[RMDB]
RNA sequence: GGGAACGACUCGAGUAGAGUCGAAAAUGAACGGCUCGUGCGCGAGCGCCGCGAGAUCGACGCGCCUGCGCCGCGCGAGCCGAUGCGUCGCGGGCAGGCAGCAGAGGAACGGCUCGGAGAGGAUCGACUAUAGGCCGUAUUUCGAUACGGCCUAUAGAAAAGAAACAACAACAACAAC
Reactivity to 2A3 in 0.01 (KOAc 150mM, MgCl2 10mM, bicine 150mM(pH8.5), 24C), signal-to-noise 1, nucleotides 027 to 126: u120g000a110a050c030g000g000c010u000c010g040u090g000c030g000c010g020a100g050c010g000c000c000g020c010g020a050g020a200u120c040g080a070c040g020c010g000c000c050u160g020c080g130c050c000g000c010g000c000g000a010g030c000c010g000a010u040g010c020g110u090c040g010c020g000g000g040c000a010g050g000c070a030g000c040a010g030a060g040g050a110a050c020g030g010c020u000c050g080g000a080g010a000g030g010a070u080c010g090a030
Reactivity to DMS in 0.01 (KOAc 150mM, MgCl2 10mM, bicine 150mM(pH8.5), 24C), signal-to-noise 3, nucleotides 027 to 126: u010g010a130a210c040g010g010c000u000c000g020u000g010c030g040c050g020a160g020c040g020c090c110g010c020g010a140g000a080u010c080g010a120c090g000c020g000c060c060u000g010c010g030c030c040g000c020g000c030g000a040g020c050c050g000a000u000g020c040g030u000c030g010c050g000g010g010c010a060g010g000c030a050g010c050a080g000a120g010g000a070a090c080g020g010c030u000c050g020g000a120g010a080g010g000a080u000c080g010a220
About this RNA: Structure probing data (2A3 and DMS) for a 177-nucleotide construct. It was measured as part of the RMDB library OK2TRN. The reactions ran in a buffer of 150 mM KOAc, 10 mM MgCl2 and 150 mM bicine (pH 8.5), at 24 C. Reactivities are given for positions 27 through 126. 2A3 adducts were read by reverse transcription with SuperScript II with manganese.